[RMDB]
RNA sequence: GGGAACGACUCGAGUAGAGUCGAAAAGCGGUGGUACGCGCUUCUCAGUGGUCACACCGCAAAUUUCGGCAGCUGGCGUUGAGCAUCUUGAUACUAUCCUCCAGCCGUAUAUCAACGUCGAACCAGAACUCACUGGGGAGUUCGCUCCCCAGUGAGUAAAAGAAACAACAACAACAAC
Reactivity to 2A3 in 0.01 (KOAc 150mM, MgCl2 10mM, bicine 150mM(pH8.5), 24C), signal-to-noise 1, nucleotides 027 to 126: g000c000g020g020u020g020g020u070a070c120g010c020g070c300u300u080c100u060c140a050g010u010g000g000u020c010a000c000a000c000c000g000c000a000a000a100u000u000u020c000g000g000c020a030g010c010u070g000g080c020g020u070u070g060a030g010c040a130u100c050u120u070g020a040u070a280c060u090a090u120c030c020u000c040c000a010g000c000c000g150u120a070u070a000u140c010a000a030c070g050u000c010g010a010a010c000c000a000g090a070
Reactivity to DMS in 0.01 (KOAc 150mM, MgCl2 10mM, bicine 150mM(pH8.5), 24C), signal-to-noise 2, nucleotides 027 to 126: g000c010g010g000u000g000g000u000a040c060g050c050g000c050u000u030c240u000c210a080g020u000g010g000u000c070a070c020a030c020c020g040c000a050a050a090u000u000u000c040g020g000c040a040g010c150u000g020g010c130g000u000u000g000a070g010c030a070u010c070u000u000g000a050u020a060c060u000a140u000c030c000u000c110c020a070g000c050c140g010u000a090u000a110u000c070a030a180c210g000u000c000g010a030a210c050c050a100g000a100
Chemical mapping of a 177-nucleotide RNA with 2A3 and DMS. For DMS the reverse transcriptase was MarathonRT. The DMS profile rests on 1,001 reads. Source: RMDB library OK2TRN, as collected in RNAgym. Values cover nucleotides 27 to 126. In probing experiments dimethyl sulfate is read out at A N1 and C N3, which are open when not base-paired.